RNA sequence: GGGAACGACUCGAGUAGAGUCGAAAAGGGGUCUCAUCUCAGUAUCCCAUUUGUCAGCGUUAACAAGCUGAAGCCUCCACGGCUUGUCCACGCUUGGAUUUAAUGGGAGAACCGAUGAGACGGAGGCACCCAAAAGUGCCCUGUUCGCAGGGCACAACAGGUGAAAAAUCUUCGGAUUUUUCACCUGAAAAGAAACAACAACAACAAC
Reactivity to 2A3 in 0.01 (KOAc 150mM, MgCl2 10mM, bicine 150mM(pH8.5), 24C), signal-to-noise 2, nucleotides 027 to 156: g090g010g010g000u000c000u000c000a010u000c000u000c000a000g010u010a000u010c000c000c010a010u000u010u030g050u020c050a010g000c010g000u010u030a020a000c010a010a010g010c000u030g020a050a020g060c020c020u020c030c020a040c010g000g010c010u000u010g000u020c080c040a020c010g030c030u120u210g150g000a040u230u190u150a010a020u020g000g000g000a010g000a000a010c010c010g000a000u000g000a010g010a000c010g000g000a000g000g020c010a030c020c010c020a050a120a040a020g000u010g000c000c000c000u010g020u030u020c140g010c080a000g010g010g000c000a000c000a000a000
Reactivity to DMS in 0.01 (KOAc 150mM, MgCl2 10mM, bicine 150mM(pH8.5), 24C), signal-to-noise 1, nucleotides 027 to 156: g040g030g030g030u010c010u000c000a020u000c030u000c000a110g000u000a190u000c000c000c000a090u000u000u000g000u010c010a000g070c000g060u000u000a220a060c020a000a070g000c010u000g020a060a140g010c050c010u000c010c020a300c070g000g030c000u010u010g020u000c020c050a060c010g040c000u000u000g030g040a140u000u000u010a010a010u000g000g000g010a040g000a170a180c220c300g000a080u020g000a050g010a020c010g010g050a080g040g050c010a100c000c040c040a040a060a080a160g000u000g040c000c000c010u000g040u000u000c250g000c030a010g000g000g010c000a000c000a000a160
Structure probing data (2A3 and DMS) for a 207-nucleotide construct. The data come from the RNA Mapping Database (RMDB), library RNAMAK. For 2A3 the reverse transcriptase was SuperScript II with manganese. Values cover nucleotides 27 to 156.